Structure probing data (2A3 and DMS) for a 177-nucleotide construct. The RNA was probed in 150 mM KOAc, 10 mM MgCl2 and 150 mM bicine (pH 8.5) at 24 C. 2A3 adducts were read by reverse transcription with SuperScript II with manganese. The data come from the RNA Mapping Database (RMDB), library TTRDEL.
RNA sequence: GGGAACGACUCGAGUAGAGUCGAAAAGAUAUGGACGCCCAUAGGAGGUUGACCUCGGAAACGAGUGACUCCGUGGUGCGUCCUAAGUCAAAACAUCUCUUCUUAUCUUCGGAUAAGAAGAGAUGAACAGAAUGAAAUACUUCGGUAUUUCAUUCUGAAAAGAAACAACAACAACAAC
Reactivity to 2A3 in 0.01 (KOAc 150mM, MgCl2 10mM, bicine 150mM(pH8.5), 24C), signal-to-noise 4, nucleotides 027 to 126: g020a020u070a030u130g010g000a020c010g020c000c050c050a050u170a300g030g000a010g040g060u300u140g050a050c010c010u010c020g000g020a060a090a030c010g010a000g010u050g040a030c000u010c010c000g000u000g010g020u200g000c000g000u000c000c000u000a010a000g000u010c010a000a020a080a100c000a000u000c000u000c000u010u000c000u000u010a010u010c010u030u050c300g190g000a000u000a010a010g000a000a000g000a000g000a000u000g000a010a000
Reactivity to DMS in 0.01 (KOAc 150mM, MgCl2 10mM, bicine 150mM(pH8.5), 24C), signal-to-noise 5, nucleotides 027 to 126: g000a070u010a300u010g000g010a010c000g020c010c000c000a010u010a130g060g000a010g020g000u010u000g010a130c300c000u000c000g000g000a070a110a100c010g000a020g010u000g000a040c000u000c000c000g020u000g000g010u010g030c010g000u000c000c000u000a010a070g010u000c040a110a070a130a120c010a000u000c000u000c000u000u000c000u000u000a000u000c000u000u010c250g010g000a010u000a000a000g000a010a000g000a000g010a000u000g000a050a180